[RMDB]
RNA sequence: GGGAACGACUCGAGUAGAGUCGAAAACACCAGGGCCAUACGGCUGCAACACCCCUACAAGUGCCGGUAGGUGUGGGCUGAGACCAUCCUACAUGGGGAAGGCCCUGAGAGGCCGGGAAUUUGCAGGACCUGAACCUUAGUUCGCUAAGGUUCAGGUAAAAGAAACAACAACAACAAC
Reactivity to 2A3 in 0.01 (KOAc 150mM, MgCl2 10mM, bicine 150mM(pH8.5), 24C), signal-to-noise 1, nucleotides 027 to 126: c040a020c010c000a090g000g010g000c000c000a110u110a240c090g010g040c050u000g030c000a030a150c030a030c020c030c010c000u020a040c090a240a000g100u070g160c000c060g040g010u030a010g050g030u080g040u070g110g030g000c030u100g010a020g060a120c000c010a000u020c010c040u050a120c050a190u160g030g010g000g040a040a050g020g000c000c000c000u020g020a130g020a040g010g090c000c090g000g000g090a040a110u070u050u100g050c070a040g000g150
Reactivity to DMS in 0.01 (KOAc 150mM, MgCl2 10mM, bicine 150mM(pH8.5), 24C), signal-to-noise 2, nucleotides 027 to 126: c090a220c080c000a100g010g020g010c020c030a210u000a140c120g030g020c020u000g020c040a090a200c070a140c040c040c000c000u000a070c070a080a070g020u000g020c020c050g010g030u000a020g010g000u010g010u010g000g000g020c040u000g010a190g000a080c020c010a070u000c060c030u010a020c040a110u010g030g020g000g020a150a300g010g010c000c010c000u000g000a070g020a130g030g000c000c020g030g010g000a040a060u000u000u000g000c050a010g010g010

Notes:
Chemical mapping of a 177-nucleotide RNA with 2A3 and DMS. For 2A3 the reverse transcriptase was SuperScript II with manganese. The RNA was probed in 150 mM KOAc, 10 mM MgCl2 and 150 mM bicine (pH 8.5) at 24 C. The 2A3 profile rests on 929 reads. The data come from the RNA Mapping Database (RMDB), library OK2TRN.